[RMDB]
RNA sequence: GGGAACGACUCGAGUAGAGUCGAAAAGCCAAUGCAGAGCUGAUUUCCAAGCGCUCUACCUGUGAUCGCGCCUUUGUGGGAGCUGUUUUGGUAAAGGAUAACCGCAUUAUUGCCACAGGUUAUAAUGCCGUCGUAUGCGCUUCGGCGCAUACGACGGAAAAGAAACAACAACAACAAC
Reactivity to 2A3 in 0.01 (KOAc 150mM, MgCl2 10mM, bicine 150mM(pH8.5), 24C), signal-to-noise 2, nucleotides 027 to 126: g010c000c000a060a070u110g000c020a000g000a040g010c070u090g070a240u060u140u170c000c010a040a070g000c010g000c000u010c050u130a120c030c030u080g000u020g190a100u070c010g000c000g000c050c120u240u300u190g190u180g090g010g010a140g000c000u040g090u000u120u130u010g050g000u000a030a030a030g100g000a070u050a150a060c010c000g090c000a000u050u060a070u040u260g060c010c010a300c040a090g000g000u000u000a000u040a000a000u040g000
Structure probing data (2A3) for a 177-nucleotide construct. The data come from the RNA Mapping Database (RMDB), library OK1LIB. The reactions ran in a buffer of 150 mM KOAc, 10 mM MgCl2 and 150 mM bicine (pH 8.5), at 24 C. For 2A3 the reverse transcriptase was SuperScript II with manganese.